[RMDB]
RNA sequence: GGGAACGACUCGAGUAGAGUCGAAAAUAAAAGAAGACAUACCAUAAAAGAUUUUUAAGAUUUAGUAUGGAGGCAGGAAUGGCUGUGUAGCCUGGAGAGCUACAUAGGCUGAUAGCAGGCUUUGGAUGCUCUGAGCCGUAUGUCCAUGCAGCUGUGGGAGAACCAUAACGUUCGCGUUAUGGUUCUCAAAAGAAACAACAACAACAAC
Reactivity to 2A3 in 0.01 (KOAc 150mM, MgCl2 10mM, bicine 150mM(pH8.5), 24C), signal-to-noise 1, nucleotides 027 to 156: u130a000a040a000a000g100a080a060g040a020c020a030u060a040c030c060a020u140a100a090a030a030g050a050u040u050u180u240u260a160a080g020a050u150u120u080a020g010u080a050u020g000g020a000g030g000c020a000g030g040a150a150u090g010g000c000u010g000u040g010u020a000g010c000c000u000g030g000a080g000a000g000c000u010a000c010a000u050a030g130g020c030u030g060a040u100a020g110c080a000g160g000c000u070u010u050g010g000a040u220g020c010u000c000u100g020a030g000c000c000g010u040a010u050g000u010c010c000a000u060g000c070a030g010c000u010g000u110g060g140
This 207-nucleotide RNA was probed chemically with 2A3. For 2A3 the reverse transcriptase was SuperScript II with manganese. Reactivities are given for positions 27 through 156.